[RMDB]
RNA sequence: GGGAACGACUCGAGUAGAGUCGAAAAGUUAGUUAAUGCUGCUAACACACAUCUUAAGCAUGGCGGUGGUAUCGCUGGUGCUAUUAAUGCGGCUUCAAAAGGGGCUGUCCAAAAAGAGUCAGAUGAGAACGUUCGUAGUUCGCUACGAACAAAAGAAACAACAACAACAAC
Reactivity to 2A3 in 0.01 (KOAc 150mM, MgCl2 10mM, bicine 150mM(pH8.5), 24C), signal-to-noise 9, nucleotides 027 to 129: g000u010u020a000g010u030u110a150a060u280g120c120u050g000c010u020a030a000c040a000c000a000c010a130u040c030u100u130a050a010g000c010a020u030g030g000c030g000g040u130g080g170u160a050u150c010g000c030u080g090g030u020g000c010u030a040u090u140a070a040u110g020c010g000g000c000u040u040c060a110a140a110a140g020g000g010g000c020u040g070u090c030c030a060a100a030a020a010g070a020g060u090c050a010g020a090u070g040a050g030a080a030c070
Reactivity to DMS in 0.01 (KOAc 150mM, MgCl2 10mM, bicine 150mM(pH8.5), 24C), signal-to-noise 6, nucleotides 027 to 129: g020u000u000a010g030u020u060a080a080u020g030c150u020g030c000u000a010a000c020a150c190a090c080a000u000c020u050u050a090a070g010c030a000u040g000g000c000g000g000u060g020g010u060a120u050c030g030c020u000g030g030u000g000c020u000a090u000u030a080a080u030g000c000g000g000c060u050u010c000a070a060a110a050g040g000g000g030c010u000g020u040c060c080a010a050a050a070a060g000a080g000u060c090a010g020a030u050g000a030g030a110a070c140